[RMDB]
RNA sequence: GGGAACGACUCGAGUAGAGUCGAAAAGGGGUCGACAACUCUGGGGAGAGAAGGGAGGGUCGGCUGGGAAGAGUAUAUCCUAUGGGAAUCCCUGGUUUCCCCUUAUGUCCAGUCCCUCCCCGGUCCGGACUAUGUAAGGGUUCGCCCUUACAUAGUCAAAAGAAACAACAACAACAAC
Reactivity to 2A3 in 0.01 (KOAc 150mM, MgCl2 10mM, bicine 150mM(pH8.5), 24C), signal-to-noise 2, nucleotides 027 to 126: g020g020g010g020u070c030g010a030c050a110a050c060u040c060u120g000g000g050g000a060g010a010g000a090a060g010g010g030a080g010g050g020u090c050g010g090c040u030g020g000g000a080a060g060a060g240u080a040u030a050u180c020c000u070a140u180g080g000g030a020a040u020c000c030c000u000g200g000u000u010u020c020c020c020c010u000u060a160u130g020u000c020c040a020g040u020c030c000c010u040c030c000c000c010g020g030u000c050c050g060
Reactivity to DMS in 0.01 (KOAc 150mM, MgCl2 10mM, bicine 150mM(pH8.5), 24C), signal-to-noise 2, nucleotides 027 to 126: g010g010g020g050u000c120g020a030c180a120a100c050u000c040u020g000g000g000g000a040g020a070g010a230a060g010g000g000a030g000g000g030u000c050g010g020c050u020g000g000g020a040a090g010a140g000u050a090u000a050u010c020c030u010a110u000g000g000g000a180a080u010c020c030c000u000g000g010u010u010u010c010c000c010c110u010u000a050u010g000u010c030c020a080g000u000c010c020c010u010c020c000c000c050g010g000u030c040c070g000